RNA sequence: GGGAACGACUCGAGUAGAGUCGAAAACGUUAACGAGAAAAAGCAAAUAUUCACGCAAGCAUUCAAUGAAUAUUUUCGAAUGUUCGUCGUAUCGAUAACCUGUAGAUGAAAGGUAGCGGAGGUAAACGCUCACGAGUACUUUCGAGUACUCGUGAGCAAAAGAAACAACAACAACAAC
Reactivity to DMS in 0.01 (KOAc 150mM, MgCl2 10mM, bicine 150mM(pH8.5), 24C), signal-to-noise 1, nucleotides 027 to 126: c050g000u000u080a010a000c130g060a150g000a120a050a030a000a200g030c120a010a000a070u000a070u000u020c100a070c170g000c300a070a140g000c260a050u020u000c070a210a000u040g000a000a000u000a070u080u000u000u000c050g000a090a000u020g100u000u000c000g100u000c000g010u000a030u000c000g000a000u070a050a130c000c000u060g080u010a010g000a090u000g000a060a050a000g000g000u000a060g000c010g000g000a100g000g020u000a190a120a080c260
Reactivity to 2A3 in 0.01 (KOAc 150mM, MgCl2 10mM, bicine 150mM(pH8.5), 24C), signal-to-noise 2, nucleotides 027 to 126: c040g000u080u080a080a010c020g000a000g050a110a150a000a000a000g130c040a000a010a030u000a000u070u080c020a000c100g060c060a000a030g030c080a100u130u040c050a030a130u110g120a100a000u030a080u040u110u070u140c100g060a140a040u060g090u070u060c020g160u000c040g000u000a030u090c000g000a000u050a120a150c000c000u000g040u160a040g000a220u210g100a190a100a110g010g060u040a010g060c010g000g100a070g070g070u160a100a010a000c090